[RMDB]
RNA sequence: GGGAACGACUCGAGUAGAGUCGAAAAAGUUGGGGACCCCUGUCUUAGAGGACAUGGAGAUCCUUUUUGUGACACCAAGUCAAAAGUAAAUGGCACGUCUCAUUCCUUUGGGUUUUUGUGGAUGCAGCUCAAAGUUUCCCUGUGUUUCCACCCCCCAAUUAUUUUACCGUUUCGACGGUAAAAUAAUAAAAGAAACAACAACAACAAC
Reactivity to 2A3 in 0.01 (KOAc 150mM, MgCl2 10mM, bicine 150mM(pH8.5), 24C), signal-to-noise 1, nucleotides 027 to 156: a000g160u180u130g010g010g000g060a060c020c000c000c020u020g020u020c000u030u140a060g070a110g190g000a000c020a020u120g020g010a100g020a220u030c020c000u010u080u020u080u080g070u020g020a020c030a020c050c060a110a010g050u080c060a080a100a110a000g120u150a060a140a160u090g020g000c010a000c140g020u020c010u020c040a040u040u120c000c000u040u020u030g020g000g030u000u060u040u130u200g030u010g020g000a000u060g060c000a000g000c020u000c080a060a090a020g020u030u050u020c010c000c010u040g040u020g010u100u110u050c000c010a020c010c030c010c060c000c000a030
Reactivity to DMS in 0.01 (KOAc 150mM, MgCl2 10mM, bicine 150mM(pH8.5), 24C), signal-to-noise 1, nucleotides 027 to 156: a070g000u000u000g020g020g000g000a090c010c020c010c000u000g010u010c010u010u000a140g030a270g010g010a030c040a050u000g040g010a180g000a100u010c010c000u000u010u000u000u010g010u000g020a080c040a150c050c030a080a230g030u000c060a070a070a070a130g020u000a050a080a140u000g010g000c000a080c090g010u020c030u010c010a080u000u000c020c010u010u000u020g010g000g070u010u000u000u010u020g040u010g030g010a070u000g010c060a090g010c030u000c020a020a040a130g000u000u010u000c010c000c020u000g020u000g010u000u010u000c010c040a120c020c000c010c010c000c020a110